[RMDB]
RNA sequence: GGGAACGACUCGAGUAGAGUCGAAAACACUACACCAGAUACUGAGCCAUCAACUUCAAGUGCGAGACCCAAGAAAACAAAGAAUUGCCAUCAACCCAAAAACAGAACUAGAAGCAAGAAGAAUCCUCAGCCUUGUUCCAAAUGUAGUAGGAAGGUACACCAUUAGGAUGUUCGCAUCCUAAUGGUGAAAAGAAACAACAACAACAAC
Reactivity to 2A3 in 0.01 (KOAc 150mM, MgCl2 10mM, bicine 150mM(pH8.5), 24C), signal-to-noise 5, nucleotides 027 to 156: c040a020c030u120a020c030a040c040c020a020g010a050u090a100c050u070g050a010g030c030c030a080u060c040a070a050c040u110u030c050a040a050g020u040g080c030g020a050g030a080c000c010c010a030a020g090a030a080a010a010c070a020a100a000g070a100a130u080u050g030c020c010a020u070c030a050a120c010c000c020a020a100a030a030a020c050a010g070a040a010c020u060a040g030a080a000g040c040a030a020g040a050a000g030a050a090u050c000c010u030c020a020g000c010c000u020u030g020u060u040c010c010a010a080a120u140g010u020a060g020u010a020g040g040a040a010g080g010u110a010
Reactivity to DMS in 0.01 (KOAc 150mM, MgCl2 10mM, bicine 150mM(pH8.5), 24C), signal-to-noise 3, nucleotides 027 to 156: c030a120c020u010a070c010a060c010c020a100g030a110u000a030c070u010g010a090g030c030c050a120u010c050a080a100c020u000u000c040a090a110g010u000g020c040g020a140g050a100c030c000c030a040a200g000a030a040a100a120c090a060a080a160g010a070a070u000u010g020c000c020a120u020c030a120a070c020c020c030a010a040a080a070a100c050a090g000a050a090c050u010a070g030a050a090g020c030a050a110g010a100a110g020a070a090u010c030c030u000c020a120g040c040c020u000u020g000u000u000c040c020a050a070a090u020g030u000a070g020u000a080g000g020a060a050g050g030u010a240